RNA sequence: GGGAACGACUCGAGUAGAGUCGAAAAAUGCGGCCACCGAGGUCGGCCGCGCGUGCGCUGGUUGCCGUGUUGAACCUGGUGUAGUUCAUUAUCAAUUUACAGCUGGUGUCCCUGGCUCUGGUAAAUCACUGAUAGAUGCGUUCGCGCAUCUAUCAGUAAAAGAAACAACAACAACAAC
Reactivity to DMS in 0.01 (KOAc 150mM, MgCl2 10mM, bicine 150mM(pH8.5), 24C), signal-to-noise 1, nucleotides 027 to 126: a100u020g020c000g020g040c000c080a090c030c120g000a130g040g010u000c120g010g030c000c040g030c010g010c170g030u000g010c070g020c030u000g010g040u000u000g010c020c050g000u020g000u000u000g010a130a080c060c010u000g030g000u000g000u010a060g000u020u000c080a070u010u010a140u030c150a030a020u010u000u000a080c060a030g000c010u000g010g000u000g010u000c020c030c020u000g000g000c060u000c050u000g020g000u000a040a050a110u020c180